About this RNA
This 177-nucleotide RNA was probed chemically with 2A3 and DMS. It was measured as part of the RMDB library OK2TRN. For 2A3 the reverse transcriptase was SuperScript II with manganese. DMS adducts were read by reverse transcription with MarathonRT. The 2A3 profile rests on 1,209 reads.

RNA sequence: GGGAACGACUCGAGUAGAGUCGAAAAAUGGUGACGAGAUAGAGCGGCACCGCGAUGCCGAUCAUCGCGCCUGUGUGGAAUUGCGGCCAGACAAGCGUGAGCGUGGAUAUCUCGGGCGCAGGCAGUAACGAUCCCAUGAUUUCGAUCAUGGGAUCGUAAAAGAAACAACAACAACAAC
Reactivity to 2A3 in 0.01 (KOAc 150mM, MgCl2 10mM, bicine 150mM(pH8.5), 24C), signal-to-noise 1, nucleotides 027 to 126: a000u150g030g030u050g040a070c060g010a000g000a050u080a090g120a040g080c010g010g000c010a020c030c020g070c110g050a080u050g000c010c040g000a100u110c000a000u060c020g000c000g000c030c030u060g000u020g010u030g010g050a040a060u120u250g020c080g150g010c040c000a050g000a040c020a040a000g010c000g000u010g000a000g030c140g090u130g010g040a080u010a030u030c000u000c000g060g020g000c050g000c000a010g030g010c050a010g070u070a040
Reactivity to DMS in 0.01 (KOAc 150mM, MgCl2 10mM, bicine 150mM(pH8.5), 24C), signal-to-noise 2, nucleotides 027 to 126: a090u000g000g040u010g010a060c030g020a030g010a060u010a060g000a140g010c000g020g010c000a050c060c190g000c250g000a100u000g000c000c020g000a070u010c070a130u010c000g020c050g010c040c040u010g000u000g000u010g020g000a120a080u010u020g010c200g010g010c010c000a040g000a010c030a040a020g010c030g040u000g020a130g020c130g000u000g010g010a170u000a020u000c000u000c020g000g010g030c020g010c030a070g010g000c100a100g000u000a080